An RNA of 177 nucleotides, treated with 2A3 and DMS and read out base by base. The data come from the RNA Mapping Database (RMDB), library OK2TST. DMS adducts were read by reverse transcription with MarathonRT. High DMS reactivity at an A or C suggests that its Watson-Crick edge is free.
RNA sequence: GGGAACGACUCGAGUAGAGUCGAAAAUCAUGGUGACCUUGCUGAGUGGCUGUGGCAGCAUUAUUAGUCGCACUAUACCGGGGCAGGGGCAUGGCAACCAAUAUUAUCCCGGUGUGCAAUGGGAUGAACCCAUUAGCCUAUUCGUAGGCUAAUGGGUAAAAGAAACAACAACAACAAC
Reactivity to 2A3 in 0.01 (KOAc 150mM, MgCl2 10mM, bicine 150mM(pH8.5), 24C), signal-to-noise 3, nucleotides 027 to 126: u040c010a030u080g020g060u110g070a110c020c000u020u070g020c010u040g060a040g030u080g040g000c040u020g020u010g050g010c030a010g020c040a040u040u040a070u100u100a190g080u080c020g030c020a020c020u060a030u070a220c020c040g140g000g000g000c040a050g000g010g000g000c030a040u060g050g000c050a050a070c010c020a030a020u140a110u160u070a040u050c000c000c000g000g050u110g010u020g000c080a060a080u110g020g020g010a020u020g040a050
Reactivity to DMS in 0.01 (KOAc 150mM, MgCl2 10mM, bicine 150mM(pH8.5), 24C), signal-to-noise 4, nucleotides 027 to 126: u010c110a080u010g010g010u000g010a100c020c040u000u010g010c010u000g000a120g030u010g010g020c100u000g000u000g010g000c030a110g010c070a090u000u000a070u010u010a130g010u010c090g020c020a060c060u000a110u010a050c040c030g000g000g000g000c140a050g010g010g000g010c050a040u020g000g000c080a080a120c050c050a070a060u000a130u010u000a090u000c010c000c000g020g020u000g020u010g020c090a070a070u020g010g000g010a060u000g000a090